About this RNA
An RNA of 207 nucleotides, treated with 2A3 and DMS and read out base by base. DMS adducts were read by reverse transcription with MarathonRT.
[RMDB]
RNA sequence: GGGAACGACUCGAGUAGAGUCGAAAAUUGAUGAUGAGUAUUAUCUUAAUUGCUUAUUAGAUAAUCUGCAUAUAGAGAGGAAUCACAUUCUUGGUUAUAUAUGUAAUACGACAUUAUUUCAUAAGUAUCCUGAUUAUUUGAAACCAUUAUUGAUGGACUACAAUUCGGUUUUCGAACCGAAUUGUAGAAAAGAAACAACAACAACAAC
Reactivity to 2A3 in 0.01 (KOAc 150mM, MgCl2 10mM, bicine 150mM(pH8.5), 24C), signal-to-noise 3, nucleotides 027 to 156: u070u050g020a010u010g000a010u040g030a010g110u170a100u180u040a030u020c020u050u130a080a050u100u060g000c010u020u050a040u010u010a020g020a020u010a010a010u040c020u030g000c020a000u030a010u020a020g070a000g010a020g060g040a030a060u080c040a050c030a170u050u000c010u030u050g060g000u260u030a040u000a010u000a000u110g010u020a070a090u090a170c060g030a010c040a040u020u020a010u030u040u010c020a000u030a020a030g020u050a020u050c010c010u040g060a130u030u130a070u110u160u120g080a080a030a030c020c000a010u040u090a100u180u190g090a030u090g020g060a040
Reactivity to DMS in 0.01 (KOAc 150mM, MgCl2 10mM, bicine 150mM(pH8.5), 24C), signal-to-noise 2, nucleotides 027 to 156: u000u000g030a030u000g010a060u010g010a220g000u000a100u000u030a030u020c000u010u000a050a080u000u000g000c040u000u000a160u000u010a040g020a030u020a000a050u020c030u000g010c010a030u000a030u000a080g010a300g020a140g030g000a040a100u000c290a070c040a300u000u000c020u010u020g050g000u010u010a140u000a070u000a000u000g000u020a030a100u000a200c140g030a070c010a050u010u000a040u000u000u000c040a070u000a010a100g030u000a020u040c040c050u010g010a020u000u000a060u010u010u000g000a130a080a090c040c020a020u060u000a090u000u000g010a100u000g010g030a300

The DMS profile rests on 1,699 reads. Values cover nucleotides 27 to 156. The reactions ran in a buffer of 150 mM KOAc, 10 mM MgCl2 and 150 mM bicine (pH 8.5), at 24 C.